[RMDB]
RNA sequence: GGGAACGACUCGAGUAGAGUCGAAAAGACACGACGGAGACGUCGUGUCAAGUCCAGUGCGAAAGCACUGGACAAAUAAGGGCUGUUAUUCUCGCUGACUGUCAGCCCCAAACAAAAUAUGUCAGCAUCCGACUAAUAAUUUCGAUUAUUAGUCGGAAAAAGAAACAACAACAACAAC
Reactivity to DMS in 0.01 (KOAc 150mM, MgCl2 10mM, bicine 150mM(pH8.5), 24C), signal-to-noise 4, nucleotides 027 to 126: g000a010c000a020c000g010a000c000g020g000a230g000a230c000g020u000c000g010u000g000u000c010a020a050g010u000c000c000a010g010u000g010c000g000a160a050a200g000c000a010c010u000g010g000a000c010a010a020a050u010a170a160g000g020g020c000u000g000u000u010a090u010u010c100u000c140g020c000u000g010a020c010u000g010u000c010a010g010c000c000c010c170a030a020a150c050a020a020a040a010u000a030u010g000u000c000a010g020c000a250
Reactivity to 2A3 in 0.01 (KOAc 150mM, MgCl2 10mM, bicine 150mM(pH8.5), 24C), signal-to-noise 4, nucleotides 027 to 126: g000a000c000a000c000g000a010c000g000g040a040g020a060c000g000u000c000g010u000g000u000c010a000a000g000u000c000c010a010g000u000g000c000g090a150a020a020g010c000a010c000u000g000g010a000c000a000a020a000u110a040a060g000g000g000c000u000g030u060u050a140u210u090c130u080c140g000c010u010g010a010c000u010g010u050c000a000g000c000c000c020c060a010a050a000c010a010a030a020a030u120a050u130g000u000c010a000g000c000a020
Annotation:
The data come from the RNA Mapping Database (RMDB), library OK2TRN. An RNA of 177 nucleotides, treated with DMS and 2A3 and read out base by base. For DMS the reverse transcriptase was MarathonRT. The DMS profile rests on 4,794 reads.